[RMDB]
This 177-nucleotide RNA was probed chemically with DMS and 2A3. In probing experiments dimethyl sulfate is read out at A N1 and C N3, which are open when not base-paired. The 2A3 profile rests on 1,549 reads. For 2A3 the reverse transcriptase was SuperScript II with manganese. It was measured as part of the RMDB libraries RFM100 and RFMREP.
RNA sequence: GGGAACGACUCGAGUAGAGUCGAAAAUCUCUUGGAAUAGAGCACGAAACAGGGUGAUAGUCCCGUACUGCAGGCGAGUAUCGGACGCGUCAGCUCCAGAGUAUCGGGGGUUGGAUAUCCCUCGUGAAGGUUUACGGAUUUUCGAAUCCGUAAACCUAAAAGAAACAACAACAACAAC
Reactivity to DMS in 0.01 (KOAc 150mM, MgCl2 10mM, bicine 150mM(pH8.5), 24C), signal-to-noise 3, nucleotides 027 to 126: u010c000u000c010u020u010g020g020a220a120u040a020g000a080g010c050a050c100g000a090a070a070c140a040g000g000g020u010g010a130u010a130g020u020c000c010c030g020u000a010c050u000g020c060a050g030g030c130g010a040g000u020a030u020c300g000g000a030c080g010c080g000u000c010a020g000c010u010c010c030a090g010a080g000u040a100u020c040g020g010g000g010g020u030u000g050g000a090u070a120u000c020c000c000u000c020g050u010g030a080
Reactivity to 2A3 in 0.01 (KOAc 150mM, MgCl2 10mM, bicine 150mM(pH8.5), 24C), signal-to-noise 2, nucleotides 027 to 126: u010c010u000c010u020u110g110g010a020a020u060a120g050a000g070c010a040c070g150a030a120a070c060a040g010g120g000u050g040a050u040a050g070u010c000c020c010g000u040a010c000u020g090c040a110g150g050c060g060a030g000u020a010u040c000g000g010a000c020g000c040g070u010c020a000g040c000u040c040c010a060g040a020g050u150a150u170c010g010g000g000g000g000u070u030g060g020a040u030a020u120c000c010c000u010c000g010u060g010a040